[RMDB]
RNA sequence: GGGAACGACUCGAGUAGAGUCGAAAAGCACAAUAAUUUUAAAAAGGCCUGUAUAAAUUACCUCCUUGUGCAGCUGCAGCACGUUGGUAAUGCAGAGGACAUCAACCCCUGUAGCGGGAAACCUGGGAUAGAAAUAUGGUUUCGACCAUAUUUCUAUAAAAGAAACAACAACAACAAC
Reactivity to 2A3 in 0.01 (KOAc 150mM, MgCl2 10mM, bicine 150mM(pH8.5), 24C), signal-to-noise 4, nucleotides 027 to 126: g050c020a010c070a080a090u230a150a160u100u120u120u260a140a220a080a040a000g040g020c020c000u050g030u130a120u050a250a190a030u050u030a010c000c000u020c000c040u120u130g010u010g000c020a030g040c050u090g040c020a020g000c020a000c040g020u030u020g000g020u030a060a040u030g000c010a000g050a050g060g020a020c020a100u130c030a080a100c020c000c010c000u070g040u070a020g010c050g020g010g000a070a020a000c000c000u050g020g010g080
Reactivity to DMS in 0.01 (KOAc 150mM, MgCl2 10mM, bicine 150mM(pH8.5), 24C), signal-to-noise 2, nucleotides 027 to 126: g000c050a040c050a080a090u070a050a030u020u020u040u020a010a080a160a190a230g000g010c060c030u010g000u030a130u020a080a100a060u000u010a010c010c010u030c020c000u050u020g040u000g020c000a090g000c040u010g000c040a070g000c000a010c020g010u000u010g000g030u000a020a020u000g020c080a040g000a070g000g000a110c100a050u020c100a070a180c060c010c090c050u000g010u020a100g030c030g020g000g000a040a060a060c030c010u000g010g000g000
About this RNA
Chemical mapping of a 177-nucleotide RNA with 2A3 and DMS. The DMS profile rests on 2,733 reads. The RNA was probed in 150 mM KOAc, 10 mM MgCl2 and 150 mM bicine (pH 8.5) at 24 C. DMS adducts were read by reverse transcription with MarathonRT. It was measured as part of the RMDB library OK1LIB.